Background:
Chemical mapping of a 177-nucleotide RNA with 2A3 and DMS. The DMS profile rests on 1,250 reads. For 2A3, 1,787 sequencing reads were counted. For DMS the reverse transcriptase was MarathonRT. Reactivities are given for positions 27 through 126.
[RMDB]
RNA sequence: GGGAACGACUCGAGUAGAGUCGAAAAGACGGAUUCUUCGGAAUCCGUCAAAGUGACGGUGAAAAAUGGCCAAUCCGCCAGCUACCACCGACACAGGGCGCAAAACUGGAGUGUUCGCACUCCAGAACGAGCAUUUUUAGUUCGCUAAAAAUGCUCGAAAAGAAACAACAACAACAAC
Reactivity to 2A3 in 0.01 (KOAc 150mM, MgCl2 10mM, bicine 150mM(pH8.5), 24C), signal-to-noise 1, nucleotides 027 to 126: g000a020c010g000g010a010u020u020c030u010u040c150g090g000a000a000u000c000c000g000u000c000a020a000a000g010u000g010a000c000g000g000u010g030a000a020a030a050a060u030g010g000c040c020a050a290u050c050c040g000c010c010a010g030c010u030a010c040c030a000c000c010g010a010c000a000c010a010g060g060g000c130g070c140a030a000a120a070c000u010g000g010a000g010u030g020u040u130c170g040c060a000c020u020c000c010a000g000a000a010
Reactivity to DMS in 0.01 (KOAc 150mM, MgCl2 10mM, bicine 150mM(pH8.5), 24C), signal-to-noise 2, nucleotides 027 to 126: g000a010c000g010g000a010u000u000c000u000u010c160g090g000a000a000u010c000c000g030u000c000a020a010a060g020u000g000a110c020g000g000u000g000a030a100a100a090a180u000g000g010c010c090a130a210u000c270c240g000c000c010a000g000c170u020a150c180c000a000c000c000g040a080c020a000c020a190g000g000g020c130g000c130a050a030a060a120c000u000g000g000a010g030u000g000u000u000c160g000c010a020c010u000c010c000a020g020a030a060